[RMDB]
An RNA of 177 nucleotides, treated with 2A3 and read out base by base. The reactions ran in a buffer of 150 mM KOAc, 10 mM MgCl2 and 150 mM bicine (pH 8.5), at 24 C. For 2A3, 320 sequencing reads were counted.
RNA sequence: GGGAACGACUCGAGUAGAGUCGAAAAACGUGGUACGCCACGAACCAAAUUUAGACUCAGUAUUUAUAUUUUUAAUUGACAUUUGGACUUCUCCUAAUCACCUCGGUUACAUAGCCGGGGUAUUUAAUGUACAUCCACCGUUCGCGGUGGAUGUACAAAAAGAAACAACAACAACAAC
Reactivity to 2A3 in 0.01 (KOAc 150mM, MgCl2 10mM, bicine 150mM(pH8.5), 24C), signal-to-noise 1, nucleotides 027 to 126: a000c000g020u030g030g040u000a040c170g020c030c000a000c000g000a000a000c000c000a000a000a000u220u240u210a250g010a090c030u000c160a010g060u120a030u000u250u000a100u000a120u100u040u010u110u130a250a170u090u060g010a000c010a060u030u060u010g010g010a010c030u030u000c020u130c000c000u000a000a060u120c000a000c000c000u000c000g040g000u100u000a180c250a300u280a240g000c000c000g000g000g000g000u000a000u000u000u000a070a000